[RMDB]
RNA sequence: GGGAACGACUCGAGUAGAGUCGAAAAGCUCUGUAAUGGGAUGGGAUCCUAAGCCCCAUUGAGGGAUAAUACAGGCUCUCCCAUCCAACUCCUAUUCCAACACGUCCUCGUCGUACAGAGUGGUAACUAAGGUAUAGCUCCUUCGGGAGCUAUACAAUCUACAGUAAGUCUUCGGACUUACUGUAGAAAAAGAAACAACAACAACAAC
Reactivity to DMS in 0.01 (KOAc 150mM, MgCl2 10mM, bicine 150mM(pH8.5), 24C), signal-to-noise 2, nucleotides 027 to 156: g010c010u000c000u000g010u010a090a090u000g010g010g000a040u000g010g000g000a120u020c040c020u000a160a220g000c000c000c000c020a300u000u000g000a110g000g030g000a110u000a100a150u010a190c160a040g000g020c050u000c040u030c010c000c010a040u010c010c010a020a040c050u010c020c020u000a080u010u000c010c020a100a130c040a100c050g000u000c010c020u000c020g020u010c070g000u010a060c020a050g010a050g010u000g000g000u000a060a100c050u000a110a120g010g020u000a010u000a020g020c010u010c000c010u000u000c300g040g010g000a020g000c000u000a000u000a000c030a040a110
Reactivity to 2A3 in 0.01 (KOAc 150mM, MgCl2 10mM, bicine 150mM(pH8.5), 24C), signal-to-noise 3, nucleotides 027 to 156: g030c000u000c000u000g030u020a160a120u160g120g000g010a000u000g000g000g030a110u300c010c000u050a130a040g000c040c000c000c000a120u140u220g060a300g000g000g010a030u070a210a050u160a240c160a020g010g020c010u000c000u000c020c010c000a000u000c000c000a000a010c010u000c000c030u090a120u130u060c020c020a070a020c030a040c060g080u050c030c030u100c060g090u020c010g030u020a000c020a020g020a000g020u040g010g060u110a160a060c110u070a200a050g120g000u000a000u000a000g000c000u010c000c010u040u030c080g080g000g000a000g030c000u000a000u000a000c000a000a000